RNA sequence: GGGAACGACUCGAGUAGAGUCGAAAAGAUAUGGAUCAGGUAUGCAGCGAUGAAAUCGGAAACGAUGGAGCUGGAUACUGAUCCUAAGUCAAACGAUACACUUCACCUUCGGGUGAAGUGUAUCGAAUCACAUAUUCUAGUUCGCUAGAAUAUGUGAAAAAGAAACAACAACAACAAC
Reactivity to DMS in 0.01 (KOAc 150mM, MgCl2 10mM, bicine 150mM(pH8.5), 24C), signal-to-noise 9, nucleotides 027 to 126: g010a030u000a300u000g000g000a000u000c000a020g010g010u000a010u000g000c000a010g000c000g000a110u010g010a080a110a010u000c000g000g000a140a100a200c000g000a010u000g000g010a090g020c000u000g000g000a010u000a010c000u000g000a000u000c000c000u000a010a070g010u000c030a090a090a270c010g000a010u000a000c000a010c000u000u000c000a010c000c000u000u010c230g020g000g020u000g000a000a000g010u000g010u000a000u000c000g000a040a090
Reactivity to 2A3 in 0.01 (KOAc 150mM, MgCl2 10mM, bicine 150mM(pH8.5), 24C), signal-to-noise 8, nucleotides 027 to 126: g030a010u070a030u150g000g000a010u000c020a030g170g170u080a010u040g300c010a000g010c020g220a300u050g020a050a030a000u020c010g000g020a080a070a040c010g000a010u020g000g010a010g000c000u000g020g020a000u000a010c000u000g000a000u000c000c000u010a110a010g050u030c050a090a040a080c020g000a000u010a000c000a000c000u000u000c010a000c000c000u040u080c300g040g000g000u000g010a000a000g000u000g000u000a000u000c000g000a000a000